[RMDB]
Notes:
The record gives the reactivity of an RNA of 207 nucleotides to DMS and 2A3. The DMS profile rests on 4,337 reads. For 2A3, 9,150 sequencing reads were counted. Reactivities are given for positions 27 through 156. For 2A3 the reverse transcriptase was SuperScript II with manganese.

RNA sequence: GGGAACGACUCGAGUAGAGUCGAAAAAUGAGAUCCCAUCUUGCACACUGUGCUAAUUUGAGAUUCUCAUGCCUCCUACUUGGAGACAUCUGGACUAGAAGUCAGGGCAUCUGACUCUGCCAGCCACAAAACGUACAAGGCUUCGGCCUUGUACGAACCUUCAAGCAUAGUUCGCUAUGCUUGAAGGAAAAGAAACAACAACAACAAC
Reactivity to DMS in 0.01 (KOAc 150mM, MgCl2 10mM, bicine 150mM(pH8.5), 24C), signal-to-noise 2, nucleotides 027 to 156: a070u000g020a040g020a070u010c000c000c020a010u000c080u000u000g000c000a060c010a220c170u000g000u000g020c010u010a030a000u000u000u000g020a070g000a070u000u000c010u010c010a030u000g010c000c040u000c010c010u010a180c200u000u020g040g010a040g030a020c030a110u000c010u000g010g020a090c010u000a100g000a130a040g010u000c010a030g030g000g030c180a140u010c020u010g000a020c010u000c030u020g030c040c020a000g010c050c020a100c100a050a050a090a130c000g000u000a000c010a010a020g010g030c000u010u010c300g050g000c000c010u000u000g000u010a000c000g000a010a030
Reactivity to 2A3 in 0.01 (KOAc 150mM, MgCl2 10mM, bicine 150mM(pH8.5), 24C), signal-to-noise 9, nucleotides 027 to 156: a000u010g000a000g000a010u000c000c000c010a000u000c010u010u020g010c010a020c050a090c210u300g020u010g020c080u130a060a070u010u010u020g040a040g000a040u290u070c000u000c010a010u050g020c010c010u010c010c010u100a220c100u120u220g040g000a050g020a030c020a090u030c000u010g010g040a100c070u140a130g030a160a010g090u000c000a010g030g060g180c080a150u130c120u010g000a000c000u000c000u000g000c000c010a030g040c020c010a110c040a040a100a080a020c010g000u000a000c000a000a000g000g000c000u040u110c140g080g000c010c000u000u000g000u000a000c000g000a000a000